Notes
Chemical mapping of a 177-nucleotide RNA with 2A3 and DMS. The data come from the RNA Mapping Database (RMDB), library OK1LIB. 2A3 adducts were read by reverse transcription with SuperScript II with manganese. Conditions: 150 mM KOAc, 10 mM MgCl2 and 150 mM bicine (pH 8.5), 24 C. The 2A3 profile rests on 16,006 reads. Values cover nucleotides 27 to 126.

RNA sequence: GGGAACGACUCGAGUAGAGUCGAAAAUCACCUUUGAAAUGGUAUUAAUGGUCACUGAUAUGUUAGAGGGACGACUCAAUGUUUCUUCUUUGUGCACAGCUAGUCAUUAUCUGUCCCCUCUAAAGAACCAUUUUACAAAGUUCGCUUUGUAAAAUGGAAAAGAAACAACAACAACAAC
Reactivity to 2A3 in 0.01 (KOAc 150mM, MgCl2 10mM, bicine 150mM(pH8.5), 24C), signal-to-noise 9, nucleotides 027 to 126: u090c020a140c010c000u070u050u130g170a120a110a070u150g040g040u090a060u100u110a120a080u130g050g010u070c040a030c090u060g060a070u070a070u280g120u080u050a010g000a010g020g010g000a010c060g020a030c030u030c130a070a100u070g030u050u070u020c000u060u010c000u040u160u090g100u080g020c080a040c020a110g010c030u030a010g030u040c020a040u040u100a070u120c060u050g040u040c020c000c000c000u000c010u020a070a080a010g010a010a020
Reactivity to DMS in 0.01 (KOAc 150mM, MgCl2 10mM, bicine 150mM(pH8.5), 24C), signal-to-noise 5, nucleotides 027 to 126: u040c070a080c010c000u010u010u010g010a050a110a070u020g010g000u000a060u010u020a110a070u010g010g010u010c040a080c070u030g000a080u030a070u020g010u000u000a020g000a030g000g010g020a090c070g010a070c090u020c110a050a100u030g020u010u000u000c020u000u000c060u000u010u010g020u010g000c100a050c080a050g000c060u000a030g010u000c040a040u030u010a080u020c090u020g000u010c050c010c010c050u000c040u010a010a050a090g010a080a160